An RNA of 177 nucleotides, treated with 2A3 and DMS and read out base by base. The data come from the RNA Mapping Database (RMDB), library OK2TST. Reactivities are given for positions 27 through 126. The reactions ran in a buffer of 150 mM KOAc, 10 mM MgCl2 and 150 mM bicine (pH 8.5), at 24 C. The DMS profile rests on 3,791 reads.
[RMDB]
RNA sequence: GGGAACGACUCGAGUAGAGUCGAAAAUAACGAGCAACUAGACGAUACAAAAGGAACGAUCGAUUCAUGAAUGACUUGGCGAAAAACGAUUCGAUGGCUGAAGCAAGCAUUAGUUUUAAGCGCAGUAUCCCAUUGUUCUUUUCGAAGAACAAUGGGAAAAAGAAACAACAACAACAAC
Reactivity to 2A3 in 0.01 (KOAc 150mM, MgCl2 10mM, bicine 150mM(pH8.5), 24C), signal-to-noise 2, nucleotides 027 to 126: u090a020a010c050g000a010g030c020a030a020c000u040a020g030a070c050g040a040u050a110c050a020a130a010a070g060g030a060a020c030g010a040u030c040g060a040u060u070c040a060u150g110a110a060u060g060a080c020u060u100g040g030c010g040a090a010a040a010a010c040g030a050u070u080c000g050a040u050g060g020c010u020g020a050a000g020c050a090a000g020c010a030u040u030a040g060u000u020u020u130a060a030g000c030g000c040a010g010u030a060
Reactivity to DMS in 0.01 (KOAc 150mM, MgCl2 10mM, bicine 150mM(pH8.5), 24C), signal-to-noise 4, nucleotides 027 to 126: u020a110a110c070g010a100g030c050a030a070c070u000a110g010a090c070g000a100u000a050c100a030a060a100a090g020g030a080a060c150g010a070u000c030g020a070u000u000c040a060u020g010a090a080u010g000a080c080u010u010g000g020c030g010a060a050a050a070a070c090g000a070u000u010c060g010a070u000g010g020c010u010g010a080a080g000c110a050a070g010c050a030u000u010a080g020u000u000u010u000a030a090g010c060g020c070a060g000u000a110